[RMDB]
RNA sequence: GGGAACGACUCGAGUAGAGUCGAAAAAAAUAAAGACACUUGAAACGCACGAUUUUUUCAAGAAUAAUAUCUGUCGAGAAGAUGUGUCACAUUACCUAUCAUUACAGUGCUACUGAUAGCCCACUAAUCAUCCUUCACCUUUCGAGGUGAAGGAUGAAAAAGAAACAACAACAACAAC
Reactivity to DMS in 0.01 (KOAc 150mM, MgCl2 10mM, bicine 150mM(pH8.5), 24C), signal-to-noise 1, nucleotides 027 to 126: a050a020a130u010a010a060a010g020a030c030a080c010u000u000g000a080a090a180c210g010c120a010c070g000a050u000u000u000u000u000u000c070a090a050g000a040a060u000a060a130u000a070u000c010u030g030u000c120g000a020g000a090a110g000a050u000g000u000g020u000c010a100c110a060u020u000a030c180c000u000a080u000c000a030u000u020a030c130a170g020u000g020c090u000a130c140u000g010a030u000a040g040c020c000c000a110c120u000a050a140
Reactivity to 2A3 in 0.01 (KOAc 150mM, MgCl2 10mM, bicine 150mM(pH8.5), 24C), signal-to-noise 1, nucleotides 027 to 126: a000a000a000u120a040a040a000g000a000c010a020c060u060u050g050a070a070a020c020g070c000a010c030g000a010u110u060u000u030u060u060c050a210a020g130a070a090u100a270a000u040a070u090c080u020g170u180c040g020a020g020a060a000g020a020u140g000u000g000u040c000a020c020a160u130u090a050c000c000u070a050u180c000a000u000u000a060c020a000g180u000g230c060u040a060c000u000g070a020u000a010g010c020c000c000a020c010u020a070a030
Source information
Chemical mapping of a 177-nucleotide RNA with DMS and 2A3. The RNA was probed in 150 mM KOAc, 10 mM MgCl2 and 150 mM bicine (pH 8.5) at 24 C. Values cover nucleotides 27 to 126. It was measured as part of the RMDB library OK2TST. The DMS profile rests on 733 reads.